[RMDB]
RNA sequence: GGGAACGACUCGAGUAGAGUCGAAAAGGCGCAGCCCUGGGAGCUGCGUUACCAGGCCUGGGUGCUCGUCACGCCGGCCGGCGCCAUCGUGCAUCUGUCGGCCGCCGAACGCAUCUGUAUGCUGGGAUACUGGGUGAGCAUUCGUGCUCACCCAGUAAAAAGAAACAACAACAACAAC
Reactivity to 2A3 in 0.01 (KOAc 150mM, MgCl2 10mM, bicine 150mM(pH8.5), 24C), signal-to-noise 2, nucleotides 027 to 126: g020g020c020g000c010a000g030c060c090c160u260g150g090g000a040g020c010u020g010c000g000u010u050a060c000c010a010g060g010c010c030u040g010g000g030u020g020c040u030c070g060u010c020a080c090g000c000c000g000g000c000c000g000g050c010g020c020c050a300u250c170g120u300g070c020a070u010c110u220g040u060c020g000g000c050c010g000c000c010g030a050a010c000g000c020a000u010c030u030g030u090a040u230g030c020u040g000g010g000a030
Reactivity to DMS in 0.01 (KOAc 150mM, MgCl2 10mM, bicine 150mM(pH8.5), 24C), signal-to-noise 2, nucleotides 027 to 126: g010g000c000g010c010a010g030c020c010c110u010g030g030g020a170g020c000u000g000c000g020u000u010a050c030c010a080g020g000c120c040u010g000g010g020u000g000c010u010c060g020u010c100a070c150g030c300c010g000g020c050c020g010g000c020g000c030c020a150u020c250g010u010g010c020a110u000c110u020g030u000c000g020g010c010c030g020c240c030g000a130a050c090g030c020a000u000c030u000g000u010a040u000g010c020u000g020g000g020a190